[RMDB]
RNA sequence: GGGAACGACUCGAGUAGAGUCGAAAAUCGACUUCCUUCGGGAAGUCGAAAAUAACGGUCGGCUCAUGAAGCUAGUCGAACAUGCUGCUGGACCUAGACUAAAAAGAAUCUCGUUCGCGAGAUUCAAGCUAAUCAAAAACUUCGGUUUUUGAUUAGCAAAAGAAACAACAACAACAAC
Reactivity to 2A3 in 0.01 (KOAc 150mM, MgCl2 10mM, bicine 150mM(pH8.5), 24C), signal-to-noise 3, nucleotides 027 to 126: u010c000g000a000c000u010u010c000c000u010u030c160g050g000g000a000a010g000u010c000g000a000a000a000a000u080a030a030c050g000g000u020c010g030g000c000u000c030a010u020g010a030a040g060c070u080a070g260u250c040g010a060a060c010a000u020g070c030u010g010c000u090g230g020a000c000c000u020a020g070a070c050u130a060a030a010a020a050g000a000a000u010c010u000c000g010u030u060c250g020c010g070a000g000a010u000u000c000a000a000
Reactivity to DMS in 0.01 (KOAc 150mM, MgCl2 10mM, bicine 150mM(pH8.5), 24C), signal-to-noise 2, nucleotides 027 to 126: u000c000g010a010c000u000u000c000c000u000u020c190g020g000g020a040a000g000u000c000g000a000a020a050a060u030a110a150c230g000g020u010c000g000g000c010u000c020a020u000g010a090a300g000c020u010a040g010u000c090g000a080a160c030a010u000g020c180u010g010c000u000g050g020a010c020c010u000a070g000a170c100u020a020a060a050a100a160g000a010a000u000c000u000c010g000u000u010c120g020c010g010a010g010a010u000u000c020a040a100
An RNA of 177 nucleotides, treated with 2A3 and DMS and read out base by base.
High DMS reactivity at an A or C suggests that its Watson-Crick edge is free.
The DMS profile rests on 1,918 reads.